[RMDB]
RNA sequence: GGGAACGACUCGAGUAGAGUCGAAAAACGACGCGUCCAUACGUGGACGCGUCGAGGCCGCCCUACCUUCUGGUGUAAGGUUUGUCGCACAGCGAUGGCCACGUGGUGGUAUACGUACCACCACGAAGGUUAUAGUAUAUUUCGAUAUACUAUAACCAAAAGAAACAACAACAACAAC
Reactivity to 2A3 in 0.01 (KOAc 150mM, MgCl2 10mM, bicine 150mM(pH8.5), 24C), signal-to-noise 4, nucleotides 027 to 126: a000c030g010a000c000g000c000g030u000c030c000a050u040a090c290g070u060g020g000a000c010g060c000g020u000c000g000a010g010g000c050c040g000c010c010c000u030a020c000c010u050u060c060u180g210g010u160g080u220a030a060g050g000u050u070u150g050u000c020g000c030a200c090a290g010c020g010a020u040g020g000c010c000a020c020g000u010g020g000u000g010g020u010a040u000a020c210g030u010a010c000c000a010c000c000a000c000g010a090a020
Reactivity to DMS in 0.01 (KOAc 150mM, MgCl2 10mM, bicine 150mM(pH8.5), 24C), signal-to-noise 1, nucleotides 027 to 126: a080c040g060a040c050g120c010g100u000c000c000a050u020a110c220g010u040g000g020a050c000g000c000g020u000c020g010a040g000g010c060c100g000c070c010c020u030a030c010c030u020u010c030u000g020g010u000g010u020a020a060g000g000u000u000u020g000u000c010g010c030a120c120a060g020c020g020a020u000g010g000c010c010a300c030g020u000g000g000u000g000g000u000a040u010a080c160g020u000a000c000c000a000c000c000a010c000g040a020a050

The record gives the reactivity of an RNA of 177 nucleotides to 2A3 and DMS. In probing experiments dimethyl sulfate is read out at A N1 and C N3, which are open when not base-paired. The RNA was probed in 150 mM KOAc, 10 mM MgCl2 and 150 mM bicine (pH 8.5) at 24 C.